[RMDB]
RNA sequence: GGGAACGACUCGAGUAGAGUCGAAAACGGAUGCCCAGGUCGGACCGCGAGGAGGUGGAGAUGCCAUGCCGACCCGAAGAGGAAAGAAGAACGCGAGACGCGAACCUGUGAGUGGAAACCCGCUUUAAUACAUGAAGCUUCGGCUUCAUGAAAAGAAACAACAACAACAAC
Reactivity to DMS in 0.01 (KOAc 150mM, MgCl2 10mM, bicine 150mM(pH8.5), 24C), signal-to-noise 9, nucleotides 027 to 129: c150g040g010a080u000g000c060c020c030a120g040g050u020c110g010g000a070c020c050g010c100g030a020g000g000a040g020g050u050g000g020a060g030a070u050g040c110c060a070u000g030c000c020g010a060c040c030c080g020a060a060g000a040g000g000a000a030a050g030a090a060g030a040a070c100g020c080g030a020g020a100c070g030c090g010a020a080c070c060u000g030u000g030a060g030u030g010g030a060a080a100c000c020c040g030c120u040u030u030a050a050u060a130
Reactivity to 2A3 in 0.01 (KOAc 150mM, MgCl2 10mM, bicine 150mM(pH8.5), 24C), signal-to-noise 9, nucleotides 027 to 129: c050g050g020a060u120g030c000c010c000a010g020g070u040c020g040g030a040c020c020g010c000g030a060g030g010a020g010g020u060g010g010a090g010a030u150g040c030c020a050u120g000c010c010g020a030c000c000c000g020a030a020g030a000g040g050a030a020a030g040a030a000g020a040a000c050g020c040g040a060g030a050c030g020c010g040a050a070c000c010u050g020u040g040a030g010u040g010g000a020a020a020c010c010c010g050c060u080u120u110a130a100u150a070